[RMDB]
RNA sequence: GGGAACGACUCGAGUAGAGUCGAAAAGGGGUCGGUGCGACGAAGAUGACUAAGUACUGUACUACCCACCGCUAACUGAAGCCUCCACGGUUAGCGAGGUACAGGAACUGUCAUCAGAGCACCGACGGAGGCACCCAAACGGGCGUUCGCGCCCGAACCUACAUUCCGGGUUCGCCCGGAAUGUAGGAAAAGAAACAACAACAACAAC
Reactivity to 2A3 in 0.01 (KOAc 150mM, MgCl2 10mM, bicine 150mM(pH8.5), 24C), signal-to-noise 1, nucleotides 027 to 156: g080g020g040g010u050c040g000g000u000g010c180g070a300c020g000a220a000g000a000u010g000a000c030u120a130a010g010u000a010c000u000g000u000a000c000u010a030c030c110c010a020c020c000g000c010u000a000a000c000u010g020a090a010g000c000c000u000c000c000a000c000g030g010u000u000a000g000c000g000a000g010g010u000a000c000a010g020g050a050a010c030u020g010u000c000a010u000c000a000g000a000g000c000a000c010c010g000a000c000g000g000a000g010g000c010a020c000c000c020a030a070a050c010g000g020g000c030g040u150u160c280g040c000g000c100c010c010g020a010a010